An RNA of 177 nucleotides, treated with DMS and 2A3 and read out base by base.

RNA sequence: GGGAACGACUCGAGUAGAGUCGAAAAGGGUCAUGCUUUCUACCGGGUACAUUAAAAGCUUACUCUGGGCUACAGGUUUAUUGGGAUCUUGUUGCUCAAGGGCCUCUUUAAUAGCCUUUAAAUUGAACUCCUAUAGUACCUUCGGGUACUAUAGGAGAAAAGAAACAACAACAACAAC
Reactivity to DMS in 0.01 (KOAc 150mM, MgCl2 10mM, bicine 150mM(pH8.5), 24C), signal-to-noise 2, nucleotides 027 to 126: g010g020g000u000c140a100u020g000c020u010u000u000c040u000a080c080c060g000g010g020u000a050c140a080u000u010a030a020a070a170g000c050u000u000a050c050u010c060u000g010g000g000c010u000a020c050a020g020g000u000u000u000a070u040u010g000g000g000a040u010c030u010u000g020u000u010g020c010u000c040a030a010g000g000g000c000c010u010c040u010u000u000a020a050u020a130g000c020c010u000u010u000a040a080a170u010u020g020a120a180
Reactivity to 2A3 in 0.01 (KOAc 150mM, MgCl2 10mM, bicine 150mM(pH8.5), 24C), signal-to-noise 2, nucleotides 027 to 126: g030g020g000u060c010a050u080g030c010u070u060u000c000u030a050c060c020g100g020g060u030a040c030a070u080u070a040a050a000a020g020c000u040u040a030c010u010c070u030g020g020g020c000u010a000c010a050g030g100u030u090u140a180u300u300g110g040g010a030u000c000u010u100g010u030u020g030c000u000c040a010a010g000g000g000c000c000u000c000u000u070u010a120a100u040a090g030c030c000u070u190u170a070a130a070u140u130g070a090a060